[RMDB]
Chemical mapping of a 177-nucleotide RNA with 2A3 and DMS. For DMS the reverse transcriptase was MarathonRT. The RNA was probed in 150 mM KOAc, 10 mM MgCl2 and 150 mM bicine (pH 8.5) at 24 C. The DMS profile rests on 1,229 reads. High DMS reactivity at an A or C suggests that its Watson-Crick edge is free.
RNA sequence: GGGAACGACUCGAGUAGAGUCGAAAAGAUAUGGACUAAUGCUUGUGGAGCGAUUAAUGUGAGGGAGUCGGAAACGACUCCUCCCCACCACAUACAUCGCGAUGAAACAAGCAUUAGUCCUAAGUCACCAUAAUUGCAACUUCGGUUGCAAUUAUGGAAAAGAAACAACAACAACAAC
Reactivity to 2A3 in 0.01 (KOAc 150mM, MgCl2 10mM, bicine 150mM(pH8.5), 24C), signal-to-noise 1, nucleotides 027 to 126: g060a040u120a030u140g000g000a000c000u000a030a010u020g000c020u030u000g000u000g110g030a100g090c010g000a010u000u140a200a080u080g020u000g050a060g060g000g040a000g020u020c000g000g000a060a000a060c020g010a010c020u000c010c000u030c030c000c000c000a020c040c010a010c000a010u080a020c160a040u040c020g030c020g300a300u210g050a030a000a010c000a010a000g000c020a000u000u000a000g000u010c000c000u000a000a000g010u000c000a000
Reactivity to DMS in 0.01 (KOAc 150mM, MgCl2 10mM, bicine 150mM(pH8.5), 24C), signal-to-noise 2, nucleotides 027 to 126: g000a040u000a300u000g000g000a010c000u000a020a000u000g020c010u000u030g000u000g000g000a140g020c000g000a000u000u030a180a070u000g000u000g000a300g000g000g000a020g040u000c010g010g000a100a050a190c010g000a010c000u000c010c010u020c030c020c040c040a300c140c000a000c000a020u010a110c300a020u000c000g030c020g000a140u030g010a080a200a020c000a000a000g010c000a010u010u000a030g000u010c000c000u000a000a080g010u030c060a300